[RMDB]
RNA sequence: GGGAACGACUCGAGUAGAGUCGAAAAAAGCAGCUAUGCGUAUUAUCGAAGGUACUGCACGUAGUAUGGGUAUCGUUGUAGAAUAAUUUUACGAAUAUUAAAUUUGAUUACAUGAUUUAAACGAUGAACUCCACACUGUGUUCGCACAGUGUGGAGUAAAAGAAACAACAACAACAAC
Reactivity to DMS in 0.01 (KOAc 150mM, MgCl2 10mM, bicine 150mM(pH8.5), 24C), signal-to-noise 1, nucleotides 027 to 126: a120a070g000c060a020g000c100u000a000u010g000c060g000u000a000u010u000a070u000c140g040a130a070g010g000u000a020c030u000g000c000a030c030g000u000a030g000u010a020u000g000g000g000u000a020u000c060g000u020u000g010u010a000g010a090a100u000a020a030u000u000u000u050a080c050g030a040a030u060a100u040u000a030a000a020u000u000u000g010a300u040u010a050c100a070u000g020a060u000u040u000a000a000a040c030g020a130u010g010a210
Reactivity to 2A3 in 0.01 (KOAc 150mM, MgCl2 10mM, bicine 150mM(pH8.5), 24C), signal-to-noise 2, nucleotides 027 to 126: a000a000g110c080a020g000c020u000a140u250g000c130g000u010a000u190u000a020u050c020g160a060a000g060g000u160a030c080u030g060c030a020c080g130u110a000g170u190a250u140g000g080g040u080a050u060c050g000u060u130g020u020a030g080a010a060u270a140a060u080u000u270u020a030c000g050a040a000u110a020u130u080a000a200a000u180u020u020g090a080u100u210a190c130a060u020g110a100u140u170u210a020a060a030c030g030a000u300g060a000